[RMDB]
RNA sequence: GGGAACGACUCGAGUAGAGUCGAAAAAAUCGCGUUUCAUGGACAGACGGUGUCUUGCCCUGAUGUCCGGUUUUUUCCGUCAGCGCAGUGCCCGGCUGUUCUGUUGCGGCGCGUCUCCCCACAUAGCAAACACUCCCUUAUUCGUAAGGGAGUGUUUAAAAGAAACAACAACAACAAC
Reactivity to 2A3 in 0.01 (KOAc 150mM, MgCl2 10mM, bicine 150mM(pH8.5), 24C), signal-to-noise 7, nucleotides 027 to 126: a000a010u070c010g000c010g010u010u030u040c040a040u080g010g000a000c000a000g000a010c000g020g020u080g020u090c030u010u050g010c030c030c010u020g020a050u060g140u100c070c060g000g020u140u110u010u020u070u040c020c010g030u040c020a000g000c000g000c020a010g040u010g050c000c010c010g010g000c010u020g030u080u010c000u040g110u040u050g020c020g010g000c000g010c020g020u000c060u050c050c000c050c000a060c020a090u190a020g050c060
Reactivity to DMS in 0.01 (KOAc 150mM, MgCl2 10mM, bicine 150mM(pH8.5), 24C), signal-to-noise 7, nucleotides 027 to 126: a060a040u010c000g000c040g000u000u000u010c020a030u010g000g000a010c020a010g000a040c020g000g000u020g010u010c030u000u000g010c000c060c010u000g000a030u010g010u020c170c070g000g000u010u010u010u010u010u010c050c010g010u000c000a010g010c300g000c000a020g010u010g000c060c010c000g000g000c000u000g000u000u000c010u010g010u000u010g020c110g000g000c030g010c000g000u010c100u000c020c010c000c140a120c220a080u030a070g000c200